[RMDB]
RNA sequence: GGGAACGACUCGAGUAGAGUCGAAAAAUUUGAUUGUUAUCAGCAGUGUCAGUGCUGGAGCUGAAUUAAUUGCCGACGGCAAUAUUCAUAUCUAUGGAAUGAUGCGCGGUCGUGCGCUAGCAGGCGCCGUUGGGUAACCUUUCGAGGUUACCCAACGAAAAGAAACAACAACAACAAC
Reactivity to DMS in 0.01 (KOAc 150mM, MgCl2 10mM, bicine 150mM(pH8.5), 24C), signal-to-noise 2, nucleotides 027 to 126: a120u010u000u000g020a110u020u010g010u010u010a110u000c020a050g020c040a080g030u010g010u020c110a070g020u000g000c040u010g020g000a070g010c070u000g000a040a060u000u010a060a070u010u000g000c030c010g000a060c110g000g010c010a020a070u010a050u000u000c010a010u000a100u000c080u010a100u020g010g000a050a030u000g010a020u010g000c050g000c010g000g000u000c030g020u000g020c000g010c040u020a090g030c150a100g020g020c020g020c060
Reactivity to 2A3 in 0.01 (KOAc 150mM, MgCl2 10mM, bicine 150mM(pH8.5), 24C), signal-to-noise 2, nucleotides 027 to 126: a010u110u100u110g020a110u030u090g080u140u060a130u190c010a010g070c010a010g000u030g010u190c060a060g120u020g060c000u040g030g000a010g010c040u060g030a070a070u070u030a080a120u120u050g050c000c000g060a070c030g100g000c020a000a000u050a050u130u040c010a010u070a210u160c010u170a090u220g120g050a040a020u040g080a020u040g000c300g040c030g160g060u020c010g040u050g000c000g020c000u010a040g050c070a070g000g000c010g020c000
Chemical mapping of a 177-nucleotide RNA with DMS and 2A3. Conditions: 150 mM KOAc, 10 mM MgCl2 and 150 mM bicine (pH 8.5), 24 C. Values cover nucleotides 27 to 126. Reactivities are rounded to 0.1 and cut off at 0 and 3.